Structure probing data (2A3) for a 207-nucleotide construct.
2A3 is a SHAPE reagent: it acylates the 2'-hydroxyl of flexible nucleotides of all four kinds.
It was measured as part of the RMDB library M2RFPK.

RNA sequence: GGGAACGACUCGAGUAGAGUCGAAAAACGCUUCACAAUGUGCGGCAAAGAAACAUUGUUUAUGCAAAGGCACUUAGCAAUGUGUGCUCAAACAUUGCUUAUUCAAACACGCUUCACAAUGUGCGACAAAACUUCACGGUCUUCGGACCGUGAAGAAGGCAGACUCUAACUUCGGUUAGAGUCUGCCAAAAGAAACAACAACAACAAC
Reactivity to 2A3 in 0.01 (KOAc 150mM, MgCl2 10mM, bicine 150mM(pH8.5), 24C), signal-to-noise 2, nucleotides 027 to 156: a000c010g000c000u010u010c030a010c000a020a010u020g010u000g010c000g050g050c120a160a160a020g060a020a090a000c010a000u010u010g050u190u070u100a120u050g000c020a000a100a110g110g000c010a020c030u050u050a010g040c000a000a000u000g000u030g040u070g020c070u050c080a060a070a000c020a020u020u000g000c000u010u040a140u060u210c140a070a080a010c060a020c070g080c020u070u120c110a020c010a150a160u160g040u040g050c020g090a100c120a000a150a040a050c020u010u000c000a000c010g000g000u000c000u010u020c050g030g000a000c000c000g000u000g000a000a000g000a000a000